RNA sequence: GGGAACGACUCGAGUAGAGUCGAAAAGAAUAAGAUUUUGAAAUAUUUAGGGUAUGGAUCUGAUUUUAAAUGUUUUCAGGUUUGUUUGCUUCCCAGUUAAAGCAAGGGUUUAACUUAUAAUAGAAAAGGACGAACUAUGGUUCGCCGUAGUUCGUCCAAAAGAAACAACAACAACAAC
Reactivity to 2A3 in 0.01 (KOAc 150mM, MgCl2 10mM, bicine 150mM(pH8.5), 24C), signal-to-noise 3, nucleotides 027 to 126: g040a000a030u090a040a040g030a070u110u130u140u080g030a050a050a010u060a030u070u070u040a020g020g000g010u070a060u120g120g110a070u030c040u090g070a010u060u050u000u090a050a060a000u090g020u010u040u020u010c000a000g000g080u010u090u040g070u000u020u090g000c020u030u000c010c000c000a050g050u040u030a010a010a020g030c080a050a060g090g080g000u000u000u030a000a000c000u040u150a090u050a300a180u120a080g170a030a110a050a030
Reactivity to DMS in 0.01 (KOAc 150mM, MgCl2 10mM, bicine 150mM(pH8.5), 24C), signal-to-noise 3, nucleotides 027 to 126: g000a070a020u000a050a050g020a070u000u010u040u020g000a060a030a050u010a020u000u010u000a030g000g010g020u000a070u030g010g010a080u030c110u020g000a070u010u000u010u040a010a010a050u000g010u000u000u010u010c040a030g000g000u000u000u000g000u000u000u000g000c130u010u000c010c000c010a050g010u010u000a020a010a040g000c080a130a130g020g000g000u000u000u010a020a040c010u000u010a080u020a110a060u030a110g010a070a070a090a140
The data come from the RNA Mapping Database (RMDB), library OK1LIB. An RNA of 177 nucleotides, treated with 2A3 and DMS and read out base by base. For DMS the reverse transcriptase was MarathonRT. 2A3 is a SHAPE reagent: it acylates the 2'-hydroxyl of flexible nucleotides of all four kinds. Values cover nucleotides 27 to 126.